[RMDB]
RNA sequence: GGGAACGACUCGAGUAGAGUCGAAAAAGUGCACACGAAUAUCACCAUGUCUUGUGUUUUUAGACGGUUAGCGAAAGAGUAUUUAGGCACGCCUGCUUAUUUCCUUGGGUCUAUUCCCGAUUGUUCUGAUAAUGUAGUGCGGGUUCGUGCUCGAGAGAUUAUCUGGGACUUUCGAGUCCCAGAUAAUAAAAGAAACAACAACAACAAC
Reactivity to DMS in 0.01 (KOAc 150mM, MgCl2 10mM, bicine 150mM(pH8.5), 24C), signal-to-noise 2, nucleotides 027 to 156: a110g010u010g010c050a070c030a100c080g010a080a030u000a080u010c060a080c070c030a120u020g000u000c030u010u020g010u010g030u000u020u020u000u000a070g030a060c020g010g020u000u020a090g030c050g020a110a060a110g000a150g020u000a060u010u020u010a100g010g030c040a040c050g000c060c050u010g000c040u000u010a050u000u000u000c070c000u010u040g010g010g000u010c020u020a180u000u000c000c000c000g010a120u000u010g000u000u000c010u000g000a130u000a050a080u010g000u000a030g030u010g020c040g030g030g000u000u000c060g040u000g000c000u000c020g000a130g000a170g020
Reactivity to 2A3 in 0.01 (KOAc 150mM, MgCl2 10mM, bicine 150mM(pH8.5), 24C), signal-to-noise 3, nucleotides 027 to 156: a000g100u050g000c020a020c000a010c100g070a070a020u060a050u170c050a020c070c010a120u190g040u000c040u040u080g010u030g000u100u060u030u100u170a020g000a010c010g060g030u020u100a040g050c030g080a060a080a040g080a060g000u070a080u070u170u110a090g010g020c010a000c030g010c020c020u020g000c020u120u040a130u190u200u150c020c010u010u040g020g000g020u030c030u100a070u030u110c000c000c010g070a060u030u110g060u100u040c040u000g050a060u070a270a060u170g150u230a100g030u020g060c020g020g030g060u140u210c040g020u050g020c030u020c020g100a120g020a000g010
An RNA of 207 nucleotides, treated with DMS and 2A3 and read out base by base. Reactivities are given for positions 27 through 156. For 2A3, 1,144 sequencing reads were counted.